The record gives the reactivity of an RNA of 177 nucleotides to 2A3 and DMS. The data come from the RNA Mapping Database (RMDB), library OK2TRN. For 2A3 the reverse transcriptase was SuperScript II with manganese. For 2A3, 3,091 sequencing reads were counted.

RNA sequence: GGGAACGACUCGAGUAGAGUCGAAAAGUUGGUGAGGUGGGCCGUGGUAUAGCCCUAACGCUAUUCAAUCUUGCUGAUACGCUUCUCGGUGGGUUGCCGACAGAAUUGAUUUCGUCGGCUGGAGGUCGACCCUUCGAUAAUUCGUUAUCGAAGGGUCAAAAGAAACAACAACAACAAC
Reactivity to 2A3 in 0.01 (KOAc 150mM, MgCl2 10mM, bicine 150mM(pH8.5), 24C), signal-to-noise 3, nucleotides 027 to 126: g060u040u020g020g030u050g020a070g060g060u050g000g040g000c040c000g040u020g030g040u080a040u040a080g000c020c010c000u050a070a010c050g000c030u050a040u100u060c030a020a070u020c040u030u080g010c030u020g000a030u030a120c060g010c030u050u000c030u000c020g050g030u050g000g010g010u080u110g000c000c000g010a000c020a070g070a020a040u220u230g150a100u040u190u050c030g000u000c000g000g020c000u020g020g030a060g000g040u070c060
Reactivity to DMS in 0.01 (KOAc 150mM, MgCl2 10mM, bicine 150mM(pH8.5), 24C), signal-to-noise 6, nucleotides 027 to 126: g010u010u000g020g020u000g010a090g000g020u000g020g000g000c070c090g000u000g000g010u010a070u010a060g010c030c040c080u010a070a100c210g000c030u000a040u010u010c070a070a080u000c070u000u000g010c050u000g000a080u010a080c140g010c080u000u000c040u000c040g000g010u000g010g010g020u000u000g010c010c010g000a020c010a090g020a020a040u010u010g000a170u000u000u000c020g010u000c010g010g020c010u000g000g010a090g010g010u000c140